[RMDB]
RNA sequence: GGGAACGACUCGAGUAGAGUCGAAAAUAGAUACAAGUACUAGAUAAAUAAAGCGCCGGCGCGAAAAUAUUAUCAAAAUCAAAUAAAUAAAUAUCUAGUACAAACGCGGCCGCGCAAUGUUCAUUUCGAUGAACAAAAAGAAACAACAACAACAAC
Reactivity to 2A3 in 0.01 (KOAc 150mM, MgCl2 10mM, bicine 150mM(pH8.5), 24C), signal-to-noise 3, nucleotides 027 to 135: u110a020g110a030u110a070c050a130a020g010u000a000c000u010a010g060a010u030a040a270a070u140a120a300a080g030c040g000c170c300g030g000c010g000c000g060a040a030a150a050u110a080u190u140a080u120c060a040a100a140a000u090c030a030a020a160u220a120a120a030u190a050a060a000u090a030u000c000u000a010g000u010a010c020a000a010a010c010g010c000g080g040c000c000g000c000g000c010a000a050u030g000u000u010c010a000u020u030u200c240g140a010u030g000a000a000c050a020a120
Reactivity to DMS in 0.01 (KOAc 150mM, MgCl2 10mM, bicine 150mM(pH8.5), 24C), signal-to-noise 2, nucleotides 027 to 135: u020a010g000a160u000a000c090a090a150g030u000a000c010u000a000g000a000u010a050a100a090u040a080a180a260g010c020g020c300c270g050g010c030g000c030g020a150a100a130a130u080a040u010u010a080u000c030a060a040a110a120u020c040a020a020a140u020a060a050a090u020a050a040a140u000a050u000c010u020a010g000u000a020c000a060a020a050c030g040c030g020g030c020c010g020c020g020c000a070a060u050g000u020u000c040a020u010u000u040c170g000a010u000g000a000a000c010a050a030

Chemical mapping of a 155-nucleotide RNA with 2A3 and DMS. Reactivities are rounded to 0.1 and cut off at 0 and 3. For 2A3 the reverse transcriptase was SuperScript II with manganese. It was measured as part of the RMDB library P90LIB. Reactivities are given for positions 27 through 135. DMS adducts were read by reverse transcription with MarathonRT. High DMS reactivity at an A or C suggests that its Watson-Crick edge is free. The RNA was probed in 150 mM KOAc, 10 mM MgCl2 and 150 mM bicine (pH 8.5) at 24 C.